[RMDB]
RNA sequence: GGGAACGACUCGAGUAGAGUCGAAAAACAGAGAAAUUGCAAAUGUAUUAAUUUAACUUACCUUGCAAUCUCUCUUAAUGGAGCCUUACCACCAGUGUAAGAAAUAACGUCUGGGUGUGAAUAAGUACACAGUAUAAGGUAAACUUUGGUGAAGUAAAAUCCAUAAUCCUUUCGAGGAUUAUGGAUUAAAAGAAACAACAACAACAAC
Reactivity to DMS in 0.01 (KOAc 150mM, MgCl2 10mM, bicine 150mM(pH8.5), 24C), signal-to-noise 1, nucleotides 027 to 156: a140c100a070g000a040g000a050a000a010u000u000g000c030a040a050a080u010g010u010a000u030u000a150a200u010u000u000a100a140c080u000u010a020c030c080u020u020g050c030a030a020u000c010u000c010u010c020u000u000a040a080u020g020g010a220g000c000c000u010u010a110c030c090a090c080c040a050g000u000g000u050a080a090g010a100a080a140u000a090a130c000g000u000c070u000g000g000g050u000g040u000g010a180a130u010a030a090g000u000a100c030a080c000a050g020u000a120u000a020a060g010g000u000a030a040a120c030u000u000u010g030g010u030g000a030a080g040u010a100a130
Reactivity to 2A3 in 0.01 (KOAc 150mM, MgCl2 10mM, bicine 150mM(pH8.5), 24C), signal-to-noise 1, nucleotides 027 to 156: a010c010a000g000a010g000a040a010a000u010u010g000c010a020a030a120u130g030u000a050u080u070a100a220u250u160u250a040a040c010u010u010a010c010c000u000u000g020c000a000a000u050c010u030c000u000c000u080u050a090a110u100g040g040a030g010c000c010u010u010a010c020c020a010c000c010a000g010u000g000u080a070a040g030a120a170a070u100a060a020c060g080u000c020u080g080g090g000u000g000u000g040a150a050u020a080a040g000u000a000c030a000c000a030g060u080a010u010a140a020g010g050u020a020a140a000c030u130u080u100g040g000u080g080a000a010g020u040a020a150
The data come from the RNA Mapping Database (RMDB), library OK3TST. Structure probing data (DMS and 2A3) for a 207-nucleotide construct. The 2A3 profile rests on 649 reads. The RNA was probed in 150 mM KOAc, 10 mM MgCl2 and 150 mM bicine (pH 8.5) at 24 C. The DMS profile rests on 1,750 reads.